[RMDB]
Conditions: 150 mM KOAc, 10 mM MgCl2 and 150 mM bicine (pH 8.5), 24 C. An RNA of 177 nucleotides, treated with DMS and 2A3 and read out base by base. It was measured as part of the RMDB library TTRDEL. DMS adducts were read by reverse transcription with MarathonRT. 2A3 adducts were read by reverse transcription with SuperScript II with manganese.
RNA sequence: GGGAACGACUCGAGUAGAGUCGAAAAGAUAUGGAUGUCCAGAGCUUUUGACGGAGUGUCGGAAACGACCUCCGAUAAGCUCGGACAUCCUAAGUCAAACAGUCCCCUACUUCGGUAGGGGACUGAAGAAGAGAUUACCGUUCGCGGUAAUCUCUUCAAAAGAAACAACAACAACAAC
Reactivity to DMS in 0.01 (KOAc 150mM, MgCl2 10mM, bicine 150mM(pH8.5), 24C), signal-to-noise 2, nucleotides 027 to 126: g000a010u000a240u020g000g000a020u000g000u000c000c000a110g010a010g020c010u000u000u010u020g000a300c110g000g000a020g010u020g020u000c000g030g010a010a050a090c010g000a030c010c010u010c000c000g020a010u020a010a040g020c010u000c020g020g000a010c010a000u000c000c000u000a000a050g020u000c020a140a130a270c040a010g000u000c010c000c010c000u000a000c000u010u010c200g010g010u000a000g020g010g000g000a010c000u000g000a030a060
Reactivity to 2A3 in 0.01 (KOAc 150mM, MgCl2 10mM, bicine 150mM(pH8.5), 24C), signal-to-noise 1, nucleotides 027 to 126: g020a010u020a000u080g010g000a010u000g000u000c010c060a100g060a000g000c030u060u270u300u230g070a040c010g000g040a020g020u300g040u050c010g030g030a040a070a000c000g020a000c000c000u000c010c020g000a000u000a010a000g010c000u000c010g020g000a010c010a000u000c000c000u000a020a020g010u000c010a080a090a090c000a000g010u000c000c000c000c040u000a000c000u010u110c210g170g050u020a000g050g000g000g000a000c000u000g000a000a000